Background
An RNA of 207 nucleotides, treated with 2A3 and DMS and read out base by base. Reactivities are given for positions 27 through 156. Conditions: 150 mM KOAc, 10 mM MgCl2 and 150 mM bicine (pH 8.5), 24 C. For 2A3, 2,967 sequencing reads were counted. It was measured as part of the RMDB library M2RFPK.
RNA sequence: GGGAACGACUCGAGUAGAGUCGAAAAAGAUCCACGCUACGGCGUGGAUCACACGUUCAUCCCUAUUGGGACGGAAGUAGGCAUAGUGCCGAAGGAACGCAUUAGUCAUGCGCUGCGGCGCAUGACACACAUCAGAGUCACUUCGGUGACUCUGAAACUUGUCAAAAUUGUUCGCAAUUUUGACAAGAAAAGAAACAACAACAACAAC
Reactivity to 2A3 in 0.01 (KOAc 150mM, MgCl2 10mM, bicine 150mM(pH8.5), 24C), signal-to-noise 4, nucleotides 027 to 156: a000g000a000u010c000c000a000c010g000c010u050a040c200g080g000c000g000u000g000g010a000u000c000a010c000a000c000g010u020u010c000a020u040c000c000c010u130a300u130u300g010g000g010a010c000g030g020a030a010g020u020a010g010g000c050a110u170a260g140u180g130c010c020g010a010a000g030g010a010a010c000g020c030a040u080u210a040g000u000c000a000u010g000c000g000c010u020g020c090g140g000c000g020c000a000u000g000a000c000a000c000a000c000a040u020c000a000g010a000g000u000c000a000c020u080u100c240g090g000u000g000a000c000u000c000u000g000a010a000a000
Reactivity to DMS in 0.01 (KOAc 150mM, MgCl2 10mM, bicine 150mM(pH8.5), 24C), signal-to-noise 1, nucleotides 027 to 156: a080g010a020u010c020c000a020c000g020c000u030a100c300g110g000c000g050u000g000g000a000u000c000a030c080a030c030g020u000u000c000a270u010c020c000c000u010a140u020u030g020g010g020a040c000g000g020a000a050g000u000a190g120g050c020a170u010a200g000u000g000c000c020g000a110a110g000g000a040a090c070g030c030a100u000u000a120g010u000c080a000u020g030c000g000c000u010g110c160g040g000c000g000c000a000u000g010a010c010a030c080a020c100a160u000c010a020g000a020g020u010c010a010c010u000u000c300g060g010u000g020a000c010u000c010u060g000a020a030a060